[RMDB]
RNA sequence: GGGAACGACUCGAGUAGAGUCGAAAAAUGACAAAGAACAUCUUGAAGCAAUUGUUAAAAUUAUUGAAAAGCAACUCGCAUAAAAGGACAUCAGCAUUUUCAAUAAAGUGUUGACAGUUAGCAGGAAGAUAACCACUUCUUUCGAGAAGUGGUUAUCAAAAGAAACAACAACAACAAC
Reactivity to 2A3 in 0.01 (KOAc 150mM, MgCl2 10mM, bicine 150mM(pH8.5), 24C), signal-to-noise 2, nucleotides 027 to 126: a020u110g030a040c060a040a180a020g040a120a040c030a100u030c020u050u090g030a090a000g000c000a010a040u060u000g010u010u040a030a030a040a060u040u060a050u030u020g000a020a000a000a020g000c010a000a060c020u020c060g110c060a040u220a170a140a010a050g030g030a020c030a070u090c070a060g000c030a200u020u010u010u010c010a040a000u040a050a040a030g110u180g060u090u040g000a000c000a010g020u000u010a030g000c010a000g110g000a040a040
Reactivity to DMS in 0.01 (KOAc 150mM, MgCl2 10mM, bicine 150mM(pH8.5), 24C), signal-to-noise 2, nucleotides 027 to 126: a110u000g000a080c150a090a100a140g020a200a120c110a050u000c070u000u000g010a140a130g000c030a000a040u000u000g000u000u000a000a060a090a100u000u000a020u000u010g000a000a020a040a050g010c030a080a050c170u000c070g000c110a080u000a030a020a090a140g000g000a090c150a070u000c170a110g000c020a090u000u000u000u000c000a000a010u020a000a020a080g000u010g040u000u000g000a000c050a010g000u010u000a070g030c000a060g010g010a110a090